[RMDB]
RNA sequence: GGGAACGACUCGAGUAGAGUCGAAAAGAUAUGGAAUCACUCAUCUGGGAGAAUGAUGUUCGGAAACGAACAAAGUUCAUCGAUCAGAUGAGGUGAUUCCUAAGUCAAACUUCAACUUCGGUUGAAGCAUCAAUUCUGACUUCGGUCAGAAUUGAUGAAAAGAAACAACAACAACAAC
Reactivity to DMS in 0.01 (KOAc 150mM, MgCl2 10mM, bicine 150mM(pH8.5), 24C), signal-to-noise 2, nucleotides 027 to 126: g020a060u010a300u000g000g000a040a000u000c000a030c000u000c010a010u000c000u000g000g010g000a080g000a020a010u000g000a300u000g020u000u000c020g000g030a120a100a230c010g000a000a000c000a010a020a300g000u000u000c000a180u010c210g000a100u020c000a000g010a020u000g010a010g000g000u010g000a020u000u000c000c010u000a000a090g000u000c040a080a070a200c000u010u000c000a010a000c000u000u000c300g060g020u000u000g000a000a000g000
Reactivity to 2A3 in 0.01 (KOAc 150mM, MgCl2 10mM, bicine 150mM(pH8.5), 24C), signal-to-noise 2, nucleotides 027 to 126: g000a010u120a040u280g000g010a000a010u010c000a000c000u010c000a000u000c020u000g020g050g030a060g020a010a000u000g030a010u020g030u000u000c010g050g020a080a090a080c000g000a000a000c000a030a050a010g040u020u000c070a300u300c110g060a120u090c010a000g000a000u000g000a010g030g000u010g000a020u000u030c000c000u000a070a000g020u010c040a040a040a100c030u000u040c000a000a010c020u030u080c300g130g000u030u020g000a010a030g000